Conditions: 150 mM KOAc, 10 mM MgCl2 and 150 mM bicine (pH 8.5), 24 C. This 207-nucleotide RNA was probed chemically with 2A3. Source: RMDB library OK3TST, as collected in RNAgym.
[RMDB]
RNA sequence: GGGAACGACUCGAGUAGAGUCGAAAACUGGGCCACGACCCGGAUCGCGAUCGUCGGGGACGACGGGCACGCCGGAAUCAUCAACAACUCGACCGACGGCGACCACUUCUGCACGGUCCGCGACAUCCAUAAGUUCGCGUCCGACUCGCAAUCGGCGACACUGGUUCCAGUUCGCUGGAACCAGUGUAAAAGAAACAACAACAACAAC
Reactivity to 2A3 in 0.01 (KOAc 150mM, MgCl2 10mM, bicine 150mM(pH8.5), 24C), signal-to-noise 1, nucleotides 027 to 156: c010u040g020g050g020c000c080a050c130g010a130c050c050c020g090g020a180u180c080g000c040g070a090u020c020g000u000c040g020g000g040g150a040c050g000a040c000g000g010g000c130a150c060g050c000c000g030g040a140a080u070c040a030u090c050a050a120c010a020a060c100u040c100g070a080c120c070g030a020c030g000g010c040g080a060c000c050a080c050u230u230c130u140g000c030a010c070g050g000u000c000c130g050c040g030a020c010a040u110c120c000a040u110a130a010g060u040u000c000g020c000g040u000c020c020g020a010c020u020c050g000c060a010a080u150c040g000g000c030g040